[RMDB]
RNA sequence: GGGAACGACUCGAGUAGAGUCGAAAAGAAGGGUCGCAGUUAAUGACUACCGCCUCCAGUGUACAAUGGUCUCCAAUAUGAGUAAAAACUAUCAUUUGGACUAGGUGAGAUGCCUUUGGUCCAUCAAGCAGGUCAUACGAUUCGUCGUAUGACCUGCAAAAGAAACAACAACAACAAC
Reactivity to DMS in 0.01 (KOAc 150mM, MgCl2 10mM, bicine 150mM(pH8.5), 24C), signal-to-noise 1, nucleotides 027 to 126: g040a140a060g000g010g000u000c070g000c130a020g000u020u030a040a030u000g010a050c040u020a050c040c300g010c020c000u000c010c020a060g000u000g010u010a130c120a090a080u010g000g000u010c000u000c010c010a010a010u070a030u000g000a030g000u070a010a070a020a000a020c080u000a000u000c000a170u010u000u030g030g000a090c000u000a010g000g020u020g030a040g000a030u000g000c000c000u000u000u000g010g010u000c000c010a030u010c140a110a120
Reactivity to 2A3 in 0.01 (KOAc 150mM, MgCl2 10mM, bicine 150mM(pH8.5), 24C), signal-to-noise 4, nucleotides 027 to 126: g040a050a090g070g020g000u090c050g020c070a010g000u040u070a070a010u130g050a040c030u020a050c010c010g010c000c010u020c000c000a050g020u060g030u200a080c130a090a130u050g090g000u030c010u020c010c020a000a040u060a040u120g080a040g030u200a020a030a050a010a000c010u040a020u170c060a150u090u120u050g020g000a000c000u020a020g000g000u040g020a080g000a010u120g020c000c000u050u010u040g040g010u010c010c010a010u090c070a000a000